[RMDB]
RNA sequence: GGGAACGACUCGAGUAGAGUCGAAAACUGGCUACUUCAGAAGCCACAAAAACUGGGACAGGUGAUUGCACAUUAGGCCCCCUCCCCUGUCUCCCAUUCCUUGCUGUAAUGUACAGCAUGGCUGGGAUGCUAAGAAGAGGAGCUCUGGACCCUACAACAUUAGCCUACGAUUCGUCGUAGGCUAAUGAAAAGAAACAACAACAACAAC
Reactivity to DMS in 0.01 (KOAc 150mM, MgCl2 10mM, bicine 150mM(pH8.5), 24C), signal-to-noise 2, nucleotides 027 to 156: c120u020g010g040c000u000a090c060u000u020c090a150g030a140a070g080c000c010a050c030a080a040a020a100a060c070u010g030g040g010a090c020a030g000g000u000g020a110u000u000g040c060a080c150a130u000u000a150g060g010c020c000c010c030c000u000c010c000c010c060u000g010u000c150u000c000c000c000a040u010u000c010c020u010u000g060c000u010g000u000a080a140u000g000u000a070c000a010g030c030a010u010g000g030c300u000g030g000g000a090u000g000c000u020a080a070g010a110a040g020a080g000g010a030g000c020u000c030u000g000g030a180c000c000c000u010a040c060a070a190
Reactivity to 2A3 in 0.01 (KOAc 150mM, MgCl2 10mM, bicine 150mM(pH8.5), 24C), signal-to-noise 2, nucleotides 027 to 156: c020u010g010g000c000u010a010c010u110u100c060a020g020a180a020g000c020c020a060c030a010a080a020a000a040c100u090g000g000g020a000c000a020g000g040u020g100a170u000u260g140c020a020c020a190u270u290a190g070g120c000c010c010c020c000u040c000c000c000c000u000g080u070c020u010c000c000c000a000u130u190c000c010u000u000g030c000u020g000u120a300a300u220g060u160a100c000a000g010c010a010u010g000g040c000u000g000g000g040a030u010g050c020u070a110a050g000a030a000g030a070g020g020a000g020c000u000c020u050g200g020a170c000c000c000u140a030c020a090a000